[RMDB]
RNA sequence: GGGAACGACUCGAGUAGAGUCGAAAAGUAACUUUGACCAUUGAACCUUCGACAUGCCAGGCCCCCAGCACUACCCGAUGUGCUGUUACCAUCGGCAAUUCUACGCUAUGGAUGGCUGGCCGGUGCAGCCUCAGUCCACUUUCGAGUGGACUGAGGCAAAAGAAACAACAACAACAAC
Reactivity to DMS in 0.01 (KOAc 150mM, MgCl2 10mM, bicine 150mM(pH8.5), 24C), signal-to-noise 1, nucleotides 027 to 126: g010u030a110a100c120u010u000u010g020a120c020c050a060u000u000g010a270a040c060c030u010u010c150g000a070c090a050u010g000c040c000a190g000g010c050c050c130c030c180a030g010c000a000c000u000a140c050c090c000g040a120u030g010u010g000c050u000g000u000u040a090c120c020a010u010c060g040g000c010a120a060u000u000c130u030a140c140g010c090u000a140u010g060g030a100u000g010g000c120u000g000g000c050c060g020g000u010g000c130a090